The record gives the reactivity of an RNA of 207 nucleotides to 2A3. For 2A3 the reverse transcriptase was SuperScript II with manganese. For 2A3, 396 sequencing reads were counted. It was measured as part of the RMDB library OK3TST.
[RMDB]
RNA sequence: GGGAACGACUCGAGUAGAGUCGAAAAAGCCUGUGGCUACAAACUCUGAGAUCUAGAUUCUUCUGUGGCUGCUUCUGACCUGAGAAAGUUGCGGAACCUCAGCGAGCCUCACAUGGCCUCCUUGUCCUUAACGUGGGGACGGUGGGCAAGAAAGGUGGUAUCACUGCUUCUUCGGAAGCAGUGAUACAAAAGAAACAACAACAACAAC
Reactivity to 2A3 in 0.01 (KOAc 150mM, MgCl2 10mM, bicine 150mM(pH8.5), 24C), signal-to-noise 1, nucleotides 027 to 156: a000g060c010c030u080g080u100g000g000c000u060a080c140a110a140a060c060u010c040u080g050a060g010a130u000c050u130a120g040a300u110u040c020u120u060c020u100g030u060g100g000c010u010g020c030u130u000c010u030g100a130c030c010u050g000a050g050a130a140a010g030u060u040g020c060g030g050a080a040c010c020u050c030a010g000c000g070a030g020c000c030u030c000a060c030a130u040g080g000c000c000u000c000c000u000u100g000u000c000c000u150u050a300a130c040g110u280g050g050g000g070a030c040g000g000u020g000g000g000c030a010a000g000a060a010a000g030g010u070g040